[RMDB]
RNA sequence: GGGAACGACUCGAGUAGAGUCGAAAAGUCACUCAAUUCGUUGAGUGACAUACUGGGCCCGGAGUCGCGCAUGAAAGGGUCAAGUCGCGCUCGAUAAAAUAACUAGUUGCCAGUUCGCUGGCAACAACUCCUUCACCAGGUUCGCCUGGUGAAGGAGAAAAGAAACAACAACAACAAC
Reactivity to 2A3 in 0.01 (KOAc 150mM, MgCl2 10mM, bicine 150mM(pH8.5), 24C), signal-to-noise 1, nucleotides 027 to 126: g000u010c000a010c010u000c000a000a050u100u080c240g000u080u010g010a040g000u000g000a000c010a000u020a000c040u060g000g040g090c000c040c000g040g000a000g020u220c060g030c000g020c060a060u120g240a180a030a100g220g090g100u120c050a050a040g080u130c010g050c000g010c070u000c020g110a170u160a120a050a060a040u270a050a010c100u040a090g000u000u000g000c000c000a000g000u020u000c230g050c000u000g000g000c000a000a000c000a000a000
This 177-nucleotide RNA was probed chemically with 2A3. For 2A3, 670 sequencing reads were counted. The RNA was probed in 150 mM KOAc, 10 mM MgCl2 and 150 mM bicine (pH 8.5) at 24 C.